[RMDB]
RNA sequence: GGGAACGACUCGAGUAGAGUCGAAAACAGGUUCUGGUGACGGUAUCGAUAAACCAGUUGUUCCUGAACAACCUGAUGAGCCUGGUGAAAUUGAACCAAUUCCAGAGGAUUCAGAUUCUGACCCAGGAAUGAGUCAUCCGUUCGCGGAUGACUCAUUAAAAGAAACAACAACAACAAC
Reactivity to 2A3 in 0.01 (KOAc 150mM, MgCl2 10mM, bicine 150mM(pH8.5), 24C), signal-to-noise 2, nucleotides 027 to 126: c010a000g000g030u070u020c000u000g010g090u080g020a030c090g090g070u130a190u270c000g080a000u030a150a100a020c050c030a080g060u130u160g050u090u100c000c000u010g060a010a040c030a000a000c030c000u050g060a160u050g010a000g060c030c000u040g000g000u100g010a070a100a150u090u040g000a050a140c030c030a040a050u190u060c010c030a000g050a030g060g000a010u070u030c020a000g060a160u060u000c030u080g040a070c010c000c000a000g000g110
Reactivity to DMS in 0.01 (KOAc 150mM, MgCl2 10mM, bicine 150mM(pH8.5), 24C), signal-to-noise 1, nucleotides 027 to 126: c070a010g000g010u010u000c010u010g010g000u010g030a080c050g020g000u010a190u010c050g000a070u050a010a200a010c030c000a030g000u000u000g000u000u000c000c080u030g000a210a120c210a020a100c130c020u000g000a060u000g000a070g010c130c000u000g000g070u000g010a050a030a080u010u000g050a040a110c130c090a060a150u010u060c060c080a010g000a020g050g010a300u000u000c030a000g040a110u000u000c090u000g060a120c030c020c000a150g030g000